[RMDB]
RNA sequence: GGGAACGACUCGAGUAGAGUCGAAAAUGUGUACCCCCGCCUAUGUCUGUCUGUCCGCGGCCGCGUGUGCGGCUGUCUGUGGCUGUGAGCCCCCGGGUCAGUGUGGGAGUGUGCGCCCCGGCGGGCGCGGCAAAAGCGAAUUCGUUCGCUUUUGCCGAAAAGAAACAACAACAACAAC
Reactivity to DMS in 0.01 (KOAc 150mM, MgCl2 10mM, bicine 150mM(pH8.5), 24C), signal-to-noise 1, nucleotides 027 to 126: u000g030u010g010u000a160c020c020c010c020c040g010c030c030u010a070u000g020u010c040u010g000u010c030u010g030u000c030c060g020c060g000g000c000c010g040c020g000u000g020u000g040c000g000g000c010u000g000u000c070u010g050u000g010g000c020u000g020u000g020a190g010c010c010c000c020c000g010g000g010u010c070a090g030u000g020u020g010g010g000a100g010u020g000u000g000c060g000c190c000c000c040g010g000c250g030g000g020c010g020